[RMDB]
About this RNA: The record gives the reactivity of an RNA of 177 nucleotides to 2A3 and DMS. It was measured as part of the RMDB library TTRDEL. High 2A3 reactivity points to a flexible backbone, as in loops and unpaired stretches. DMS adducts were read by reverse transcription with MarathonRT. For 2A3 the reverse transcriptase was SuperScript II with manganese. The reactions ran in a buffer of 150 mM KOAc, 10 mM MgCl2 and 150 mM bicine (pH 8.5), at 24 C. Reactivities are given for positions 27 through 126.
RNA sequence: GGGAACGACUCGAGUAGAGUCGAAAAGAUAUGGACUUACUCCCCACCGUGGCGAAGAACUUAAUCGGAAACGAUUAAGGGAGCACACGAGGUAAGUCCUAAGUCAAAACACCUGUUCGCAGGUGAAGUAGUAAAAAGGGUUCGCCCUUUUUACUACAAAAGAAACAACAACAACAAC
Reactivity to 2A3 in 0.01 (KOAc 150mM, MgCl2 10mM, bicine 150mM(pH8.5), 24C), signal-to-noise 4, nucleotides 027 to 126: g080a030u240a190u240g000g000a000c000u000u000a010c010u150c070c000c000c020a030c040c030g000u020g000g030c060g140a300a030g010a130a040c000u010u010a000a010u010c000g050g000a110a030a030c010g000a000u010u000a010a010g030g010g000a010g000c020a030c000a000c300g010a020g050g000u010a000a000g000u000c000c000u010a040a010g120u060c110a010a000a150a150c010a000c020c000u030g050u090u090c300g000c140a010g050g000u010g000a040a010
Reactivity to DMS in 0.01 (KOAc 150mM, MgCl2 10mM, bicine 150mM(pH8.5), 24C), signal-to-noise 5, nucleotides 027 to 126: g010a090u000a200u020g010g010a010c000u000u000a010c010u010c150c040c020c050a300c100c020g010u010g010g000c040g000a070a130g040a220a140c000u000u000a000a000u000c000g010g010a070a090a110c010g000a010u000u000a010a000g000g000g010a080g020c020a040c030a030c010g010a120g010g010u000a010a000g000u000c000c000u010a030a120g000u000c090a100a090a090a190c010a000c010c000u000g020u010u000c210g030c000a000g000g020u000g010a030a060